The record gives the reactivity of an RNA of 177 nucleotides to DMS. The data come from the RNA Mapping Database (RMDB), library TTRDES. For DMS the reverse transcriptase was MarathonRT. Conditions: 150 mM KOAc, 10 mM MgCl2 and 150 mM bicine (pH 8.5), 24 C.
[RMDB]
RNA sequence: GGGAACGACUCGAGUAGAGUCGAAAAAAAAAGAUAUGGACCUAGUUAGGCGAUAAGAACGAAGGCCAAGUCGGAAACGACUUGGUGUUGACGUUCUUUUGACGCCUACUAGGUCCUAAGUCAAAAACUCUAUAGGGUAGUUCGCUACCCUAUAGAGAAAAGAAACAACAACAACAAC
Reactivity to DMS in 0.01 (KOAc 150mM, MgCl2 10mM, bicine 150mM(pH8.5), 24C), signal-to-noise 3, nucleotides 027 to 126: a040a040a070a070a050g000a060u010a300u010g010g010a010c000c000u000a000g000u020u000a000g010g000c020g040a150u000a020a010g010a000a000c000g010a300a110g010g000c000c000a010a000g000u010c000g010g010a060a140a190c010g000a030c000u000u000g010g010u000g000u010u000g020a220c050g010u000u000c000u000u020u000u010g030a210c090g000c010c010u000a010c010u000a000g000g010u000c000c010u000a010a060g000u010c020a110a100a100a110a100